Structure probing data (DMS and 2A3) for a 177-nucleotide construct. For 2A3, 2,031 sequencing reads were counted.
[RMDB]
RNA sequence: GGGAACGACUCGAGUAGAGUCGAAAAGUUGCCACCGACGAUGAAGUGCGCUUUUUGGGUCGUACCAUGCGCGUUGCCGCUAGCGAUAGCAUGCUUGGCCGUAUCUUCAACGGUUCAGGUGAUCCACGUCCUUCUACUGGUUCGCCAGUAGAAGGACAAAAGAAACAACAACAACAAC
Reactivity to DMS in 0.01 (KOAc 150mM, MgCl2 10mM, bicine 150mM(pH8.5), 24C), signal-to-noise 3, nucleotides 027 to 126: g010u000u020g020c120c000a030c040c140g000a260c080g000a060u010g000a120a060g000u000g020c020g000c070u000u010u000u000u020g020g000g000u010c050g010u020a090c170c010a030u000g020c050g010c080g010u000u000g010c040c050g010c060u020a080g000c210g000a090u000a070g040c080a130u000g000c030u010u000g000g010c010c020g000u000a060u010c120u000u010c120a060a080c030g000g000u010u000c030a020g030g010u000g000a100u000c050c030a110c300
Reactivity to 2A3 in 0.01 (KOAc 150mM, MgCl2 10mM, bicine 150mM(pH8.5), 24C), signal-to-noise 2, nucleotides 027 to 126: g090u110u170g080c040c000a020c010c010g040a020c060g060a070u080g100a060a020g030u050g070c060g050c050u160u060u050u050u140g040g000g060u050c040g030u030a060c020c020a020u060g010c090g000c040g070u030u060g050c030c030g040c090u040a020g000c010g040a040u060a060g060c040a050u090g000c000u030u020g000g000c010c010g040u040a090u110c080u190u100c030a000a000c020g010g040u160u120c040a040g000g050u030g020a020u000c020c000a040c080